The data come from the RNA Mapping Database (RMDB), library OK2TRN. An RNA of 177 nucleotides, treated with DMS and read out base by base. DMS adducts were read by reverse transcription with MarathonRT.

[RMDB]
RNA sequence: GGGAACGACUCGAGUAGAGUCGAAAAAUGAUAACGGUGGGGCAGGAACGAAAAUCAUCGCUGAUUUGGCACACAAAGAAGGAGUUUUAUUAGGGAGGCACAUGGUUAAUACACCUUGUGUCAGAGACCAACCAAAUGCGUUCGCGCAUUUGGUUGGAAAAGAAACAACAACAACAAC
Reactivity to DMS in 0.01 (KOAc 150mM, MgCl2 10mM, bicine 150mM(pH8.5), 24C), signal-to-noise 1, nucleotides 027 to 126: a090u000g010a240u010a020a080c070g010g000u010g000g020g000g050c010a090g040g030a050a110c130g010a040a060a080a050u000c090a070u020c100g000c140u000g020a160u000u000u010g030g000c030a040c110a040c010a080a060a110g000a040a020g000g000a110g000u010u000u000u000a150u050u010a090g000g000g000a110g010g040c000a030c040a000u000g040g000u000u000a120a120u010a010c300a080c000c000u000u000g000u010g010u010c010a050g010a150g010a260